[RMDB]
RNA sequence: GGGAACGACUCGAGUAGAGUCGAAAAUCGAUGAGCGCCGCUUCGAUGCGCGGCGCGCCAUUGAGAGGCGACGUCGUCAUCGUGCGCACGCGCGCCCGACGGUGGCGAGCGCGUCGCGCAUCUCGCACGUGGUGGGAUACUUCGGUAUCCCACCACGAAAAGAAACAACAACAACAAC
Reactivity to 2A3 in 0.01 (KOAc 150mM, MgCl2 10mM, bicine 150mM(pH8.5), 24C), signal-to-noise 1, nucleotides 027 to 126: u090c020g020a020u070g100a040g000c040g030c060c080g080c020u140u100c080g060a040u020g000c010g000c000g030g010c000g000c000g000c000c000a050u080u100g060a060g000a040g030g020c020g000a050c020g030u040c000g050u000c010a170u070c120g080u100g000c000g000c000a030c020g130c040g010c020g000c000c000c010g030a030c030g010g000u050g010g040c030g020a050g060c080g000c020g130u020c000g020c000g000c000a000u000c020u020c020g000c020a060
Reactivity to DMS in 0.01 (KOAc 150mM, MgCl2 10mM, bicine 150mM(pH8.5), 24C), signal-to-noise 2, nucleotides 027 to 126: u000c020g000a080u000g010a160g000c050g020c090c000g020c030u000u010c240g010a050u000g000c040g010c000g020g000c010g000c010g030c020c000a020u010u000g010a110g000a150g000g020c020g000a070c020g020u010c010g020u020c000a090u000c180g000u010g000c020g000c140a050c100g030c110g000c000g010c000c080c010g000a300c070g010g000u000g000g010c010g020a110g000c100g010c020g030u000c030g020c040g020c040a030u000c020u010c280g000c070a200